[RMDB]
RNA sequence: GGGAACGACUCGAGUAGAGUCGAAAAGAUAUGGAGUUCUACCCACCGAACUACGGACCAUGCUCGGAAACGAGCACAUUUCCGCGAGGAACUCCUAAGUCAAAAGCUGAGCGUUCGCGCUCAGCAACCAAAAGGACAAGUUCGCUUGUCCUUUUGGAAAAGAAACAACAACAACAAC
Reactivity to 2A3 in 0.01 (KOAc 150mM, MgCl2 10mM, bicine 150mM(pH8.5), 24C), signal-to-noise 3, nucleotides 027 to 126: g040a010u170a140u210g000g000a030g000u030u000c040u070a220c000c020c080a090c040c080g080a140a110c100u130a060c270g020g010a000c060c030a050u030g000c000u010c000g000g010a060a060a040c020g030a020g150c020a010c000a000u180u160u000c030c020g060c040g080a070g030g000a000a000c000u000c000c010u020a110a030g070u100c090a060a000a020a200g000c000u010g000a010g000c030g020u120u250c300g010c010g000c090u010c010a010g000c000a000a000
Reactivity to DMS in 0.01 (KOAc 150mM, MgCl2 10mM, bicine 150mM(pH8.5), 24C), signal-to-noise 4, nucleotides 027 to 126: g000a100u000a120u010g000g010a040g030u000u000c000u000a170c050c050c030a300c190c060g000a050a060c090u010a180c040g000g020a050c300c240a240u000g000c020u000c000g000g000a060a070a120c000g000a010g010c000a000c100a140u010u000u000c010c000g030c060g010a180g000g000a000a010c000u000c000c000u000a070a070g000u010c050a060a040a200a130g000c000u000g000a000g010c000g010u000u020c210g030c000g000c000u000c000a000g000c000a020a020